[RMDB]
RNA sequence: GGGAACGACUCGAGUAGAGUCGAAAAGGGGUCGCAAGUGGCUCGUGACAGGAGCUUGGAUUUAUGGAGCUGAAGCCUCCACGGCUCCAUUGUCAGCUCCUGCACGAGAGCUUGCGACGGAGGCACCCAAAUCCCCUCAGGGUUCGCCCUGAGGGGACUAGAAAGAUACCUUCGGGUAUCUUUCUAGAAAAGAAACAACAACAACAAC
Reactivity to 2A3 in 0.01 (KOAc 150mM, MgCl2 10mM, bicine 150mM(pH8.5), 24C), signal-to-noise 2, nucleotides 027 to 156: g060g000g020g000u010c000g020c010a010a000g020u050g250g180c010u000c000g020u020g040a160c000a000g020g010a010g020c040u180u300g100g020a090u210u290u140a020u090g000g000a000g000c020u020g030a150a020g040c010c050u050c030c010a020c030g010g000c000u010c000c000a000u000u000g000u010c010a000g000c000u020c000c000u030g000c000a000c000g010a000g000a000g000c000u000u000g000c030g000a000c000g000g000a000g000g040c030a030c000c020c000a070a130a050u020c000c000c030c010u010c000a000g050g000g010u030u020c150g120c040c000c000u010g000a000g000g000g000g000a000